[RMDB]
RNA sequence: GGGAACGACUCGAGUAGAGUCGAAAACGCUCCGUUUCAGUUCGCGGGCCUGCUCUCGCGGCAGGCUGAUGAGGAAGCGGGUUCCGCGGCCCGGUUCGGAGGCCACGCGGAUGGUCCCGCCAUGUUAGAGCAUUAAAUCGUUCGCGAUUUAAUGCUCAAAAGAAACAACAACAACAAC
Reactivity to 2A3 in 0.01 (KOAc 150mM, MgCl2 10mM, bicine 150mM(pH8.5), 24C), signal-to-noise 1, nucleotides 027 to 126: c030g030c020u070c020c030g000u010u000u050c040a070g010u050u040c020g010c020g050g020g030c010c010u000g000c000u000c020u040c150g040c150g010g020c020a000g050g000c000u000g010a080u070g040a000g000g050a030a010g010c000g010g000g000u070u050c020c000g000c000g000g000c000c040c000g000g060u270u220c140g050g030a130g090g000c000c010a050c070g000c000g030g000a020u050g030g000u030c000c000c000g010c050c040a120u180g090u160u180a040
Reactivity to DMS in 0.01 (KOAc 150mM, MgCl2 10mM, bicine 150mM(pH8.5), 24C), signal-to-noise 3, nucleotides 027 to 126: c160g010c060u010c000c020g000u000u000u010c010a050g030u000u010c040g010c050g010g010g000c010c000u010g020c030u000c050u010c300g030c160g000g040c030a020g000g000c000u000g000a100u000g000a100g000g000a040a030g000c000g010g000g000u010u000c080c060g020c010g030g010c010c000c020g030g020u020u000c080g070g020a110g010g020c030c030a090c080g010c000g020g000a040u000g020g010u000c010c000c000g000c080c100a050u000g000u000u000a170
Overview
The data come from the RNA Mapping Database (RMDB), library OK2TST. An RNA of 177 nucleotides, treated with 2A3 and DMS and read out base by base. Conditions: 150 mM KOAc, 10 mM MgCl2 and 150 mM bicine (pH 8.5), 24 C.